[RMDB]
RNA sequence: GGGAACGACUCGAGUAGAGUCGAAAAGACAAGAUUGAGCAUGAAUCUACAGAAGAUAGCUCUUCUUCAAGUAGCUUUGUUGACUUGAAUGAUCCAUUUGCACUGCUGAAUGAGGACGAGGAUACUCUCUCAGCUUGCAAUUCGUUGCAAGCUGAGAAAAAGAAACAACAACAACAAC
Reactivity to DMS in 0.01 (KOAc 150mM, MgCl2 10mM, bicine 150mM(pH8.5), 24C), signal-to-noise 2, nucleotides 027 to 126: g060a090c120a070a080g000a100u000u010g010a030g000c050a050u010g000a100a050u020c030u000a060c240a190g000a090a090g000a030u020a130g030c130u000c060u020u000c000u000u060c110a050a060g000u000a030g000c230u000u000u010g020u000u010g020a120c020u000u050g000a160a070u020g000a070u000c050c040a020u020u000u000g050c020a010c150u010g040c010u000g000a000a070u030g010a090g000g070a020c000g000a020g000g000a080u050a040c070u010c040
Reactivity to 2A3 in 0.01 (KOAc 150mM, MgCl2 10mM, bicine 150mM(pH8.5), 24C), signal-to-noise 2, nucleotides 027 to 126: g040a000c030a020a050g000a090u040u120g010a030g090c040a060u090g050a040a010u060c010u060a040c110a100g100a160a000g040a070u030a060g040c060u000c000u010u000c000u000u000c030a090a080g060u020a020g130c040u100u010u020g050u130u070g030a090c010u000u020g030a000a010u130g010a030u000c030c000a020u000u000u090g070c170a100c050u070g030c000u040g020a090a080u110g000a030g010g050a030c000g040a020g120g000a030u010a020c040u040c000
An RNA of 177 nucleotides, treated with DMS and 2A3 and read out base by base. Values are in units of 0.01, from 0 to 300, in steps of 10. For 2A3 the reverse transcriptase was SuperScript II with manganese.